[RMDB]
RNA sequence: GGGAACGACUCGAGUAGAGUCGAAAAGGUCCUUUUCUCUGUGGCGGCGGCGGUGGCGCCCGUGAUCCAAGCCUGGGCAUGCCUUUGUUUGGUGGCGUGCGCGGAGUCACUUAGGUGAGCGGUGGACAUGCACGCUAGUGUUCGCACUAGCGUGCAUAAAAGAAACAACAACAACAAC
Reactivity to DMS in 0.01 (KOAc 150mM, MgCl2 10mM, bicine 150mM(pH8.5), 24C), signal-to-noise 1, nucleotides 027 to 126: g010g030u000c000c000u060u000u000u000c020u000c060u000g030u000g000g000c090g000g030c190g000g000c050g000g000u000g000g000c060g010c050c030c010g020u050g000a070u010c010c020a070a100g020c090c030u000g000g020g040c030a030u020g000c000c010u000u020u000g000u040u000u000g060g020u000g030g010c010g010u000g080c020g000c000g020g000a210g000u000c130a060c020u010u000a140g020g030u050g000a220g020c010g010g030u030g050g040a080c200
Reactivity to 2A3 in 0.01 (KOAc 150mM, MgCl2 10mM, bicine 150mM(pH8.5), 24C), signal-to-noise 2, nucleotides 027 to 126: g040g030u110c000c000u000u020u050u000c000u060c070u090g050u060g040g030c000g000g040c000g020g030c000g050g040u020g080g020c080g080c000c000c000g050u010g010a010u050c000c080a000a030g040c000c000u130g000g050g020c090a070u130g000c000c000u160u210u130g220u060u130u190g130g000u080g000g000c030g000u020g010c090g000c020g110g000a090g020u050c030a010c060u040u120a130g000g040u000g060a010g000c040g010g010u020g000g020a060c060